[RMDB]
RNA sequence: GGGAACGACUCGAGUAGAGUCGAAAAACUGUGGUCCAAGUGCUGGGCUCAGCUCUGAUCUGUGUAUUUAAGGCUUUGCAUGCUUACUUCCUCAAAUAUUUAUCAAGGAGCUUUUAUCUAUCCAUUAUAAUGAAACACAUUGCAAUGAAGCCGGGUACCUUUUAAAAUGGUUCGCCAUUUUAAAAGGAAAAGAAACAACAACAACAAC
Reactivity to 2A3 in 0.01 (KOAc 150mM, MgCl2 10mM, bicine 150mM(pH8.5), 24C), signal-to-noise 2, nucleotides 027 to 156: a010c030u070g030u080g020g060u030c040c020a160a040g100u060g100c130u020g000g100g000c010u000c020a010g020c020u020c050u080g060a100u040c020u050g130u020g030u090a110u050u130u110a050a040g040g000c000u090u000u000g040c040a030u030g060c010u070u000a150c020u140u020c000c010u020c060a040a250a050u080a090u100u200u070a090u140c080a060a000g020g030a030g080c000u090u240u180u090a080u040c070u060a110u060c020c000a030u080u120a010u090a130a170u060g030a060a080a000c030a000c020a040u090u180g000c010a040a030u110g040a090a000g070c000c060g000g000g010u000a000
Reactivity to DMS in 0.01 (KOAc 150mM, MgCl2 10mM, bicine 150mM(pH8.5), 24C), signal-to-noise 1, nucleotides 027 to 156: a070c050u010g020u000g030g020u000c040c010a080a200g090u000g050c120u000g020g000g000c030u000c020a030g030c020u000c010u010g010a120u010c050u030g000u000g010u010a040u020u010u010a060a090g010g020c020u020u020u010g030c070a130u010g000c050u000u000a060c040u010u000c000c010u000c010a050a080a100u000a040u000u010u000a050u010c030a110a190g000g000a110g010c100u000u000u010u010a100u030c010u000a120u000c040c030a080u000u000a120u010a040a080u010g010a090a120a050c080a080c030a050u010u010g030c040a030a080u010g010a080a100g030c030c050g030g050g000u010a080